An RNA of 177 nucleotides, treated with 2A3 and DMS and read out base by base. The RNA was probed in 150 mM KOAc, 10 mM MgCl2 and 150 mM bicine (pH 8.5) at 24 C.

RNA sequence: GGGAACGACUCGAGUAGAGUCGAAAACGCGCUUCGGGAACACGUAGUUGUACUGCCAGCGCCAGCAUGCACGGUUCACGGCUCCGGCCACAGCGUUGGGCGUCUUGUUGCGGCGUCCCAGCCAGGCGUACACCUUCGAAUUCGUUCGAAGGUGUACAAAAGAAACAACAACAACAAC
Reactivity to 2A3 in 0.01 (KOAc 150mM, MgCl2 10mM, bicine 150mM(pH8.5), 24C), signal-to-noise 3, nucleotides 027 to 126: c050g000c020g000c020u060u060c080g040g000g080a110a060c070a020c150g130u140a110g040u100u100g040u110a050c050u060g030c020c050a060g050c030g030c050c020a020g020c010a030u110g000c060a010c090g060g000u100u060c030a010c070g040g010c040u010c020c040g080g000c040c000a050c040a040g050c060g060u020u000g000g020g020c010g010u000c020u140u300g150u140u200g130c090g000g000c010g000u090c000c000c000a000g000c000c000a030g040g000c020
Reactivity to DMS in 0.01 (KOAc 150mM, MgCl2 10mM, bicine 150mM(pH8.5), 24C), signal-to-noise 3, nucleotides 027 to 126: c080g000c090g010c030u010u010c040g040g040g000a090a080c050a080c080g010u000a080g010u010u010g020u000a080c100u000g020c020c060a070g010c040g000c060c010a050g030c080a050u000g020c020a040c040g020g020u010u010c080a090c060g010g020c040u000c060c050g010g020c000c040a090c180a080g010c070g010u010u000g010g010g010c020g030u000c000u010u020g020u020u010g010c190g000g000c000g000u000c010c010c020a070g000c010c040a070g000g010c110